Overview:
This 207-nucleotide RNA was probed chemically with 2A3 and DMS. The data come from the RNA Mapping Database (RMDB), library RNAMAK. The RNA was probed in 150 mM KOAc, 10 mM MgCl2 and 150 mM bicine (pH 8.5) at 24 C. For 2A3, 1,890 sequencing reads were counted.
RNA sequence: GGGAACGACUCGAGUAGAGUCGAAAACACAAGUUCGCUUGUGAAAAAAUCCUAAGUCCUCGCGAGGGAGCUCGUUGAAAGGGAGGCUCGGAAACGAGCCGAAGAACUGGAGAGCUCCGCAGCGAGGAUAUGGAAAAAAGGGAGAUUCGUCUCCCAACAUAUUACAUCUCUUCGGAGAUGUAAUAUGAAAAGAAACAACAACAACAAC
Reactivity to 2A3 in 0.01 (KOAc 150mM, MgCl2 10mM, bicine 150mM(pH8.5), 24C), signal-to-noise 2, nucleotides 027 to 156: c010a000c000a010a000g020u080u100c130g070c110u020u030g000u020g030a150a020a000a020a030a020u030c010c000u020a100a030g030u000c000c000u000c000g000c000g010a090g030g000g000a000g000c000u000c000g240u230u050g010a020a020a000g010g010g000a010g010g010c050u020c000g040g000a080a090a050c010g000a000g010c020c020g030a070a010g010a000a000c010u010g020g000a010g000a000g040c020u000c010c000g000c010a000g000c000g000a000g000g000a000u000a000u000g010g070a000a000a000a020a030a060g010g020g000a030g010a010u040u100c190g060u010c060u010c000c000c000a000a000
Reactivity to DMS in 0.01 (KOAc 150mM, MgCl2 10mM, bicine 150mM(pH8.5), 24C), signal-to-noise 1, nucleotides 027 to 156: c020a020c000a000a130g030u000u000c130g030c020u010u020g060u030g030a010a030a040a190a100a150u000c030c000u000a110a300g010u000c010c000u000c010g050c000g030a300g000g000g000a030g040c000u000c020g000u020u000g000a240a140a060g000g010g010a140g030g030c000u020c000g040g000a190a160a290c010g030a060g010c000c000g000a040a200g010a090a190c000u000g000g000a110g020a080g040c000u010c000c000g030c000a300g010c040g030a000g000g000a000u000a020u000g010g010a030a030a050a090a200a110g000g020g000a080g030a080u000u010c130g000u000c000u000c000c010c000a010a060